[RMDB]
RNA sequence: GGGAACGACUCGAGUAGAGUCGAAAAGAAUUAAGAUCCUAGUUGCCUUUUGGCGCAUAGCUUCCGCUUGUACGAGUCGACCUACACUUUUUGUGUAGGGGACAUAGCCGAGGUGUCCGACUCGGUAGGUUGCUAUGCCUAGGUUAACCUCGGCUUAGAUAUGAUGGUCAUUCGUGACCAUCAUAUCAAAAGAAACAACAACAACAAC
Reactivity to 2A3 in 0.01 (KOAc 150mM, MgCl2 10mM, bicine 150mM(pH8.5), 24C), signal-to-noise 4, nucleotides 027 to 156: g020a010a030u270u210a110a000g030a110u080c000c000u050a080g050u300u090g020c030c000u130u190u190u300g010g000c000g000c000a000u000a000g000c010u010u000c010c020g140c240u180u260g090u170a070c000g000a000g000u000c000g030a080c000c000u040a000c000a020c000u110u150u120u300u300g000u020g000u000a000g000g010g000g000a000c000a010u050a020g000c000c000g010a000g040g000u000g030u000c020c030g010a000c000u000c010g070g000u070a050g000g000u020u000g030c010u000a000u000g000c000c010u000a010g010g000u010u070a020a010c000c000u000c000g000g000c000u000u020a000
Reactivity to DMS in 0.01 (KOAc 150mM, MgCl2 10mM, bicine 150mM(pH8.5), 24C), signal-to-noise 2, nucleotides 027 to 156: g020a150a140u000u010a080a120g000a110u000c010c000u000a130g010u010u000g020c000c050u000u010u000u010g030g040c010g010c020a030u000a020g010c010u000u000c010c020g040c300u010u010g020u000a170c000g000a010g000u000c000g030a240c010c000u000a010c000a000c020u000u000u000u000u000g050u000g020u000a010g010g010g000g000a030c030a050u000a090g010c000c000g000a030g030g020u000g000u000c020c050g010a040c000u000c000g000g030u000a040g030g030u010u000g010c020u000a020u010g000c000c020u000a030g010g010u010u010a050a070c050c000u000c000g000g010c000u000u000a090